[RMDB]
RNA sequence: GGGAACGACUCGAGUAGAGUCGAAAAGCUUCCUCUUGGCGCGGAGGUUUAACUGCGCUCGCUCCCCAUAUCGGUGUGGGCGCACCGGAUUUACAAAUUAAAGUCCUUUGGGGAGCGGAAAGGGACAAAAACUUGCACGUGUUCGCACGUGCAAGAACAAAAGUCUCUUGUUCGCAAGAGACUUUUGAAAAGAAACAACAACAACAAC
Reactivity to 2A3 in 0.01 (KOAc 150mM, MgCl2 10mM, bicine 150mM(pH8.5), 24C), signal-to-noise 2, nucleotides 027 to 156: g040c020u170u120c000c000u000c000u020u000g000g000c000g000c010g000g000a000g010g060u040u150u080a010a020c030u080g000c010g010c000u000c000g010c000u000c000c010c000c000a050u030a040u170c010g000g000u010g000u040g060g170g030c080g000c010a000c010c010g030g010a020u140u110u170a140c070a080a050a030u170u210a180a100a000g000u000c010c000u040u030u020g000g000g000g000a000g010c000g000g010a000a010a000g020g000g000a020c020a070a110a000a040a050c000u010u010g000c000a000c010g000u000g040u020u050c200g020c130a010c000g000u000g020c000a000a000g000a000a000
Reactivity to DMS in 0.01 (KOAc 150mM, MgCl2 10mM, bicine 150mM(pH8.5), 24C), signal-to-noise 1, nucleotides 027 to 156: g000c120u000u000c000c000u000c020u000u000g020g040c020g150c030g000g020a070g010g020u000u000u000a100a080c090u000g010c010g050c010u000c020g020c000u000c000c000c000c040a060u000a100u010c030g030g040u000g020u010g030g010g020c130g020c010a010c030c000g000g010a170u000u000u000a300c070a080a050a220u000u000a070a070a040g010u000c000c000u000u010u000g030g000g000g000a060g080c000g000g000a000a060a060g020g000g030a050c010a070a080a120a150a070c000u000u000g010c020a010c010g030u000g000u000u020c300g020c000a010c010g070u000g010c000a010a000g020a050a140